[RMDB]
RNA sequence: GGGAACGACUCGAGUAGAGUCGAAAAGAUAUGGAUUACGAUCGCUUACACUAUAAUCUCGGAAACGAGGUAGUGUAAGAACUACGAUUCUGUAAUCCUAAGUCAAAUCGUCAGUUCGCUGACGAAACUGGUGAAUGAUGUUCGCAUCAUUCACCAGAAAAGAAACAACAACAACAAC
Reactivity to DMS in 0.01 (KOAc 150mM, MgCl2 10mM, bicine 150mM(pH8.5), 24C), signal-to-noise 2, nucleotides 027 to 126: g000a040u000a300u020g000g000a010u010u010a030c010g000a090u000c000g040c020u010u000a020c000a010c010u000a030u010a300a100u000c000u000c000g000g010a070a100a150c010g010a000g030g000u000a010g050u000g010u000a000a000g000a070a030c220u020a270c040g000a000u000u010c110u010g040u000a000a000u000c000c010u000a030a010g030u000c040a080a070a090u010c000g010u000c000a010g010u000u000c170g000c020u000g030a000c000g000a000a040a120
Reactivity to 2A3 in 0.01 (KOAc 150mM, MgCl2 10mM, bicine 150mM(pH8.5), 24C), signal-to-noise 3, nucleotides 027 to 126: g010a000u080a050u160g020g000a000u000u010a020c000g000a010u010c020g000c020u000u030a000c010a010c010u010a020u080a300a300u180c010u000c000g090g000a100a110a080c010g010a010g040g020u020a000g010u000g000u000a000a010g000a010a010c020u170a040c010g020a000u150u070c150u240g010u010a010a000u010c000c000u010a150a030g040u000c040a010a030a150u030c000g020u000c000a000g020u020u100c220g000c140u000g010a010c000g000a070a030a030